[RMDB]
RNA sequence: GGGAACGACUCGAGUAGAGUCGAAAAGACAGGAUGAUGAGUCACUCGCUGAGUGACAAUAAGCCGAGUGUUAGCGGUUUUUAUGUAAUCGUGAUGAUCAUUCCCUCAAAAGCGAUAAUUGUGAACUGACUGUCAAACCCACACUUCGGUGUGGGAAGUUAUCUAGUGUGUUCGCACACUAGAUAACAAAAGAAACAACAACAACAAC
Reactivity to 2A3 in 0.01 (KOAc 150mM, MgCl2 10mM, bicine 150mM(pH8.5), 24C), signal-to-noise 6, nucleotides 027 to 156: g020a010c020a010g050g030a070u070g010a020u060g020a040g020u000c010a010c010u010c020g300c300u250g010a010g010u020g010a010c020a000a010u090a030a000g020c010c020g020a070g050u130g030u130u130a040g030c000g010g030u020u020u000u040u050a200u120g100u100a030a060u020c020g010u040g060a080u040g020a010u060c030a040u050u010c010c000c000u030c040a040a080a010a000g020c010g010a010u050a080a120u220u150g050u030g070a040a050c030u040g050a030c010u010g010u020c000a020a030a190c000c020c000a000c000a000c000u040u050c160g070g000u000g000u000g000g000g000a000a000
Reactivity to DMS in 0.01 (KOAc 150mM, MgCl2 10mM, bicine 150mM(pH8.5), 24C), signal-to-noise 3, nucleotides 027 to 156: g010a070c050a090g010g030a130u000g020a130u000g020a290g000u010c020a010c000u000c000g050c180u040g050a100g010u000g000a030c030a070a080u000a120a120g020c030c000g020a160g030u000g020u000u010a200g060c030g040g000u000u020u000u000u000a090u030g010u000a050a040u000c040g020u000g000a230u010g020a120u000c060a120u000u020c020c010c040u000c040a080a080a080a300g000c050g010a120u000a040a110u000u000g020u000g000a090a150c110u020g010a110c070u000g000u000c030a060a060a180c000c000c000a020c000a010c020u010u020c300g060g020u000g020u000g020g010g010a010a010

An RNA of 207 nucleotides, treated with 2A3 and DMS and read out base by base. The data come from the RNA Mapping Database (RMDB), library RFM130. DMS adducts were read by reverse transcription with MarathonRT.